[RMDB]
RNA sequence: GGGAACGACUCGAGUAGAGUCGAAAACGUGUCCGUCGGCGUGGCCGACAACAUGCCCAGGUAGCCCAGACCUUCAAGGCUACGGUGCGUUGCGACGCACGGUCUGAUUCUUCACAACGACGUUCACAAGAUCGGAUCACUUUCGAGUGAUCCGAAAAUCCAACCUAAGUUUCGACUUAGGUUGGAUAAAAGAAACAACAACAACAAC
Reactivity to 2A3 in 0.01 (KOAc 150mM, MgCl2 10mM, bicine 150mM(pH8.5), 24C), signal-to-noise 3, nucleotides 027 to 156: c050g000u010g010u050c090c110g000u010c000g000g010c210g140u260g170g030c000c000g000a000c000a000a000c010a000u090g030c000c010c010a030g020g020u010a000g000c020c020c140a020g000a020c000c000u000u030c040a000a000g000g000c000u000a000c020g010g000u010g000c010g010u020u090g050c170g180a000c010g020c000a000c010g000g010u000c010u000g010a040u070u040c070u140u150c100a050c060a230a090c140g090a020c100g160u070u120c050a040c040a190a030g020a190u030c010g000g000a000u000c000a000c000u040u070u070c120g000a010g000u000g010a000u000c000c000g000a000a000a000
Reactivity to DMS in 0.01 (KOAc 150mM, MgCl2 10mM, bicine 150mM(pH8.5), 24C), signal-to-noise 2, nucleotides 027 to 156: c060g000u010g010u000c020c080g030u000c020g020g010c000g030u010g040g010c010c020g060a040c020a050a020c020a050u000g020c010c020c050a110g010g000u000a040g000c030c000c110a170g020a110c070c030u030u000c100a100a300g010g000c000u000a040c010g030g010u000g000c010g010u010u010g020c090g030a080c030g020c010a050c000g010g010u000c010u000g010a180u000u000c060u000u010c050a120c050a120a070c050g020a080c020g000u000u010c020a120c040a110a110g000a160u000c000g000g010a010u000c000a020c000u000u010u010c270g020a060g010u000g000a010u000c000c000g000a000a010a060
This 207-nucleotide RNA was probed chemically with 2A3 and DMS. For 2A3 the reverse transcriptase was SuperScript II with manganese. The reactions ran in a buffer of 150 mM KOAc, 10 mM MgCl2 and 150 mM bicine (pH 8.5), at 24 C. For DMS the reverse transcriptase was MarathonRT. Values cover nucleotides 27 to 156. The DMS profile rests on 4,259 reads. Source: RMDB library M2RFPK, as collected in RNAgym.